[RMDB]
RNA sequence: GGGAACGACUCGAGUAGAGUCGAAAAGAAAGAAAGAAAACCGUGUGGAAAAGAAUGGCUAUAACCACAGAAACCUGAGGAAACAGGAAGCCACAACGAAAGCCAUGUGGUUAGCACACGGAAGAAACACCACCAUAUCGUUCGCGAUAUGGUGGUGAAAAGAAACAACAACAACAAC
Reactivity to DMS in 0.01 (KOAc 150mM, MgCl2 10mM, bicine 150mM(pH8.5), 24C), signal-to-noise 3, nucleotides 027 to 126: g010a110a090a100g010a090a160a150g020a090a090a210a130c000c000g040u000g040u000g000g030a070a050a080a080g000a040a030u000g000g000c010u000a080u000a070a070c140c100a050c170a070g000a130a040a060c010c010u000g000a190g040g010a080a160a180c000a050g000g000a140a090g000c100c090a030c130a030a080c210g010a060a060a020g000c000c020a020u000g000u000g010g000u000u000a050g000c000a000c020a040c000g000g000a020a060g010a090a070a090
Reactivity to 2A3 in 0.01 (KOAc 150mM, MgCl2 10mM, bicine 150mM(pH8.5), 24C), signal-to-noise 2, nucleotides 027 to 126: g120a020a030a010g080a010a080a010g100a000a160a000a010c000c020g000u010g000u010g060g220a190a010a000a000g070a100a110u040g020g000c010u020a020u110a270a010c040c000a040c040a080g130a030a020a030c000c010u020g040a020g140g230a200a070a080c000a000g000g040a000a000g040c000c030a040c060a110a020c140g150a300a030a010g030c030c010a030u050g010u010g020g070u020u020a010g010c000a000c000a000c000g010g010a000a000g010a010a010a000
An RNA of 177 nucleotides, treated with DMS and 2A3 and read out base by base.
The reactions ran in a buffer of 150 mM KOAc, 10 mM MgCl2 and 150 mM bicine (pH 8.5), at 24 C.
For 2A3, 1,646 sequencing reads were counted.
It was measured as part of the RMDB library OK1LIB.
2A3 adducts were read by reverse transcription with SuperScript II with manganese.
For DMS the reverse transcriptase was MarathonRT.